[RMDB]
RNA sequence: GGGAACGACUCGAGUAGAGUCGAAAAGCUCAAUUCGUUGAGCGAUGCUCCUAAGUCGAUGCCGUUUGACGGACGAGCAAGGCGUGCAUCGGAAACGAUGCCGCUGAUGACCUCGUCCCGAGGCAUCGAUAUGGAAUACUUUUCGGUUCGCCGAAAAUUUAAGUUCGAUGUUCGCAUCGAACUUAAAAAAAGAAACAACAACAACAAC
Reactivity to 2A3 in 0.01 (KOAc 150mM, MgCl2 10mM, bicine 150mM(pH8.5), 24C), signal-to-noise 2, nucleotides 027 to 156: g010c000u010c000a020a000u140u110c220g090u100u050g010a000g000c000g000a060u170g060c040u020c020c000u020a120a040g020u020c000g000a000u000g020c000c000g060u110u170u260g060a060c050g000g000a010c010g010a000g010c030a060a090g040g000c010g040u260g000c000a010u000c000g020g000a060a060a020c020g000a000u000g000c000c010g000c010u010g000a040u130g010a040c020c020u020c000g010u000c000c010c010g000a020g000g000c000a000u010c000g000a000u000a010u030g020g010a050a060u110a220c100u070u020u030u060c020g030g030u070u050c300g000c100c010g010a010a020a040a060
Reactivity to DMS in 0.01 (KOAc 150mM, MgCl2 10mM, bicine 150mM(pH8.5), 24C), signal-to-noise 2, nucleotides 027 to 156: g010c000u000c000a010a070u000u000c300g010u000u000g000a000g010c040g010a150u010g010c080u000c000c000u000a100a300g000u000c010g050a020u010g030c000c010g020u010u010u000g010a190c140g020g030a030c000g010a040g040c060a100a140g000g040c020g000u020g010c000a020u010c000g050g010a140a140a190c000g050a060u000g000c000c020g040c000u000g000a070u000g000a110c300c000u000c010g000u000c010c000c020g000a150g000g020c000a010u000c010g010a020u000a090u000g000g000a110a090u000a020c090u000u000u000u000c000g000g000u010u000c230g040c030c000g000a000a000a010a090

Overview:
Chemical mapping of a 207-nucleotide RNA with 2A3 and DMS. Values cover nucleotides 27 to 156. 2A3 adducts were read by reverse transcription with SuperScript II with manganese. For 2A3, 2,401 sequencing reads were counted. The RNA was probed in 150 mM KOAc, 10 mM MgCl2 and 150 mM bicine (pH 8.5) at 24 C.